[RMDB]
RNA sequence: GGGAACGACUCGAGUAGAGUCGAAAAUGUCACAUCACAAGCUAAACCACUUGCGCGUACCUUUCGAAGUCCACCAGAUGUAACUUAUCUUAUGCAGAAGAUUUACGAUAAGGAUCUUGAUGGUUUAGUGAUUCUCCGGGUUCGCCCGGAGAAUCACAAAAGAAACAACAACAACAAC
Reactivity to 2A3 in 0.01 (KOAc 150mM, MgCl2 10mM, bicine 150mM(pH8.5), 24C), signal-to-noise 1, nucleotides 027 to 126: u230g010u070c000a000c010a100u000c000a000c030a210a000g020c000u030a000a000a200c000c000a000c000u060u010g060c030g010c000g130u130a090c000c010u030u000u020c070g040a050a000g000u000c000c000a010c030c030a000g000a000u030g010u160a000a000c040u000u000a000u010c030u020u020a030u300g140c160a060g000a270a000g010a040u120u240u210a230c000g000a000u000a230a000g030g010a030u030c000u000u260g110a300u140g090g030u100u000u000a000